[RMDB]
RNA sequence: GGGAACGACUCGAGUAGAGUCGAAAAGAUUACGUGUCGUUGUGGAAUCGAUACUACGCACGAGAUUCCAAGGUCUCUGUAGUACGUCCGCUGGUGACGUCUUUGGAGUCACGUUCGACAUACGAAAGGUAUCUACUAGGUUCGCCUAGUAGAUACCAAAAGAAACAACAACAACAAC
Reactivity to 2A3 in 0.01 (KOAc 150mM, MgCl2 10mM, bicine 150mM(pH8.5), 24C), signal-to-noise 7, nucleotides 027 to 126: g090a060u130u140a040c050g000u000g010u010c020g010u030u060g010u020g020g060a040a040u260c030g000a010u000a030c000u000a010c020g030c020a030c140g020a010g000a010u130u040c160c050a070a050g070g000u000c010u000c020u020g010u010a010g010u020a000c010g000u000c020c000g000c060u060g070g020u030g000a010c020g130u070c060u110u090u230g080g020a050g000u010c010a010c050g010u030u030c000g000a000c000a020u100a030c070g100a080a040a030
Reactivity to DMS in 0.01 (KOAc 150mM, MgCl2 10mM, bicine 150mM(pH8.5), 24C), signal-to-noise 6, nucleotides 027 to 126: g000a130u020u020a050c110g020u000g020u000c010g010u010u010g010u000g000g000a040a050u030c030g000a060u000a030c020u000a020c000g000c240a090c150g000a060g010a020u000u010c150c230a160a120g010g010u000c000u000c010u020g000u000a010g020u020a000c010g000u000c000c000g000c040u020g010g010u000g000a010c010g010u030c050u000u010u020g010g000a120g010u000c010a040c020g010u100u000c000g010a010c020a030u010a100c100g000a050a100a100